[RMDB]
RNA sequence: GGGAACGACUCGAGUAGAGUCGAAAACUGCUCCGGUUCGCCGGAGCAGAAAUGGAUCCAAUGGAAUCCAAAAUGGAAAUGGAGAUCCAAUAACGGAUAACAAAACCAGGAUGUUCGCAUCCUGGAAGAUGUUAGUAUCCUUCGGGAUACUAACAUCAAAAGAAACAACAACAACAAC
Reactivity to DMS in 0.01 (KOAc 150mM, MgCl2 10mM, bicine 150mM(pH8.5), 24C), signal-to-noise 3, nucleotides 027 to 126: c000u010g020c000u000c010c000g020g000u020u020c190g020c000c000g000g000a020g000c030a010g000a000a040a080u010g010g000a080u000c000c000a130a190u000g000g000a060a140u000c000c000a040a020a110a140u010g000g000a050a120a170u000g010g010a080g000a070u000c000c000a030a110u010a070a150c190g000g000a020u000a090a150c100a050a040a100a190c000c010a000g020g000a000u000g020u000u010c150g010c000a010u000c000c000u010g000g000a020a020
Reactivity to 2A3 in 0.01 (KOAc 150mM, MgCl2 10mM, bicine 150mM(pH8.5), 24C), signal-to-noise 3, nucleotides 027 to 126: c000u000g000c000u000c000c000g040g030u040u030c190g010c060c000g030g000a000g010c000a000g000a000a000a000u060g040g040a020u000c010c000a020a070u070g020g020a050a000u010c010c000a040a030a000a200u270g080g030a070a080a030u060g030g000a080g020a170u020c010c010a000a000u060a050a020c080g010g020a030u020a120a100c050a050a100a010a040c000c000a000g000g000a000u010g020u040u050c160g000c080a000u000c000c000u000g000g000a000a000

About this RNA:
The record gives the reactivity of an RNA of 177 nucleotides to DMS and 2A3. Reactivities are given for positions 27 through 126. The reactions ran in a buffer of 150 mM KOAc, 10 mM MgCl2 and 150 mM bicine (pH 8.5), at 24 C. The DMS profile rests on 2,313 reads. The 2A3 profile rests on 5,013 reads.